[RMDB]
RNA sequence: GGGAACGACUCGAGUAGAGUCGAAAAGCUCGGAGACGAGCAAGGCUGACAAAACAAUGUCCCAACCUCCACGUGGUGUCGGCUGGAUAAUGCUGCAUUAUGUUGCAUUUAUCAACUGGGAAAAAAACCACUCGCCCUAUUUCGAUAGGGCGAGUGGAAAAGAAACAACAACAACAAC
Reactivity to 2A3 in 0.01 (KOAc 150mM, MgCl2 10mM, bicine 150mM(pH8.5), 24C), signal-to-noise 2, nucleotides 027 to 126: g010c000u000c000g080g010a120g020a060c020g010a010g000c000a000a010g020g000c030u020g000a000c050a010a050a010a020c070a040a120u070g010u000c000c000c000a000a000c030c000u090c030c000a080c130g120u140g000g000u010g010u020c000g010g000c020u020g060g000a030u010a040a000u010g000c000u010g010c010a050u030u100a180u300g050u050u020g000c010a010u050u080u130a030u000c000a000a040c040u040g010g000g000a000a010a060a000a010a030a130